Chemical mapping of a 177-nucleotide RNA with DMS.
Source: RMDB library OK2TST, as collected in RNAgym.
RNA sequence: GGGAACGACUCGAGUAGAGUCGAAAAGGCGCCGCUGGUCCGCUUCUUCCUGGAGGAGACGCUGGUGCGGCGGGAGCUGCCGGGGGUGCGGCAGAGUGCCCUGGACUACUUCAUGUUCGCCGUGCGCGCAACGUAGAUCGUUCGCGAUCUACGUUGCAAAAGAAACAACAACAACAAC
Reactivity to DMS in 0.01 (KOAc 150mM, MgCl2 10mM, bicine 150mM(pH8.5), 24C), signal-to-noise 1, nucleotides 027 to 126: g020g010c010g000c020c010g040c030u000g010g010u000c010c030g010c010u000u000c030u000u020c020c030u010g000g000a180g010g010a060g010a030c070g010c010u010g040g030u000g020c020g010g010c000g010g000g030a080g010c050u010g000c010c000g000g020g020g010g050u000g020c030g020g020c080a060g000a090g010u000g010c030c050c010u000g000g000a090c070u000a060c110u010u010c110a070u010g000u010u010c020g000c010c010g010u010g020c130g030c160